The record gives the reactivity of an RNA of 207 nucleotides to 2A3. For 2A3 the reverse transcriptase was SuperScript II with manganese. The reactions ran in a buffer of 150 mM KOAc, 10 mM MgCl2 and 150 mM bicine (pH 8.5), at 24 C.
[RMDB]
RNA sequence: GGGAACGACUCGAGUAGAGUCGAAAACGAAUACAAAAUCGAUGAAACUGCACAAUUAUCUACAGUUAAAAACGAAGAUGGCACACCUGUAAACUUGUUUGAACAAGACAUGGUGGCAUUACGUGCAACUAUGCAUGUAGCAUUGCAUAUUGCUGAAAUGGGCUGCACGAUUCGUCGUGCAGCCCAUAAAAGAAACAACAACAACAAC
Reactivity to 2A3 in 0.01 (KOAc 150mM, MgCl2 10mM, bicine 150mM(pH8.5), 24C), signal-to-noise 1, nucleotides 027 to 156: c000g080a010a000u180a050c120a020a210a000a050u190c030g070a000u040g090a140a040a000c070u070g000c070a040c040a170a080u260u110a070u300c070u080a040c000a030g040u150u210a180a000a000a000a000c000g030a000a040g070a070u110g030g030c120a000c000a000c250c000u080g050u080a050a050a050c010u010u000g110u090u210u300g140a240a040c050a010a010g010a000c050a120u140g000g000u000g000g000c000a000u010u030a030c040g030u070g110c000a000a000c040u040a010u000g030c000a000u030g020u190a030g000c030a030u090u000g010c000a000u000a000u010u000g000c000u000g050a130a160